[RMDB]
RNA sequence: GGGAACGACUCGAGUAGAGUCGAAAAUGCUUGGACCACUCUGGAGGCUGUGUCGUUAGCCUGGUUCAGGGUCGGCGAUAUAGCUUCCUGAACCCGGCGGCACCGACAAAGGUGGUAAGUGGUCAUAGGCUGCUAUCACGUUCGCGUGAUGGCAGCCAAAAGAAACAACAACAACAAC
Reactivity to DMS in 0.01 (KOAc 150mM, MgCl2 10mM, bicine 150mM(pH8.5), 24C), signal-to-noise 2, nucleotides 027 to 126: u000g010c110u000u000g000g000a020c010c010a020c040u040c090u020g020g070a250g050g010c050u000g010u000g010u000c020g010u000u000a240g000c000c010u020g000g010u000u010c050a020g000g000g000u020c300g020g000c000g030a130u080a160u010a170g000c000u020u040c000c010u000g000a010a010c000c020c060g000g000c000g010g000c150a220c050c020g010a020c050a080a070a050g020g030u020g000g000u010a050a060g010u000g000g000u000c000a070u020a150
Reactivity to 2A3 in 0.01 (KOAc 150mM, MgCl2 10mM, bicine 150mM(pH8.5), 24C), signal-to-noise 2, nucleotides 027 to 126: u130g010c000u030u110g110g040a060c000c000a000c010u080c030u060g020g070a020g020g000c000u000g000u000g000u020c040g030u050u120a040g030c000c000u020g030g000u090u030c000a000g020g000g050u210c150g000g000c020g050a060u080a000u050a300g000c000u030u010c000c000u010g000a010a010c010c020c010g000g000c000g000g010c000a000c000c010g020a060c040a050a170a020g040g000u140g030g030u070a050a030g010u000g030g000u030c020a020u030a070
This 177-nucleotide RNA was probed chemically with DMS and 2A3. The data come from the RNA Mapping Database (RMDB), library OK1LIB. The RNA was probed in 150 mM KOAc, 10 mM MgCl2 and 150 mM bicine (pH 8.5) at 24 C. DMS adducts were read by reverse transcription with MarathonRT. The 2A3 profile rests on 2,576 reads.